Structure probing data (DMS and 2A3) for a 177-nucleotide construct. Values cover nucleotides 27 to 126. For DMS, 2,244 sequencing reads were counted. For DMS the reverse transcriptase was MarathonRT. Source: RMDB library RFM100, as collected in RNAgym. The RNA was probed in 150 mM KOAc, 10 mM MgCl2 and 150 mM bicine (pH 8.5) at 24 C.
RNA sequence: GGGAACGACUCGAGUAGAGUCGAAAAACUGGCUUUCUGCGCUCUUCAGAUCUCUGAAAAGAGUUGGUGCAUUCGCACUAAAUCUUUGUAUUGCGACGAACUUGUUUGUAGCGGAUACCGCAUCGCUUCAAGACUCAAGGUUCGCCUUGAGUCUUGAAAAAGAAACAACAACAACAAC
Reactivity to DMS in 0.01 (KOAc 150mM, MgCl2 10mM, bicine 150mM(pH8.5), 24C), signal-to-noise 2, nucleotides 027 to 126: a150c070u040g030g010c050u000u010u000c040u000g050c040g000c000u000c030u000u050c080a000g000a070u000c090u000c010u000g000a020a000a000a010g000a020g020u010u000g010g000u010g000c000a300u040u040c300g020c020a000c000u000a000a000a040u000c010u000u000u000g000u000a050u030u010g000c050g000a100c070g020a060a090c130u000u000g000u010u000u000g000u010a060g020c000g000g000a060u010a070c090c060g030c140a130u000c040g050c080u000
Reactivity to 2A3 in 0.01 (KOAc 150mM, MgCl2 10mM, bicine 150mM(pH8.5), 24C), signal-to-noise 4, nucleotides 027 to 126: a000c030u060g010g040c010u020u040u020c010u070g000c020g000c020u020c020u050u020c010a070g000a210u050c050u000c030u130g080a030a010a000a010g030a020g040u040u070g030g000u010g000c020a120u210u210c190g000c000a000c000u040a040a020a000u000c020u040u030u050g080u080a120u050u130g060c020g020a030c040g010a050a040c050u030u070g040u120u070u150g050u080a030g000c040g080g040a050u060a150c030c040g000c000a070u100c040g010c000u000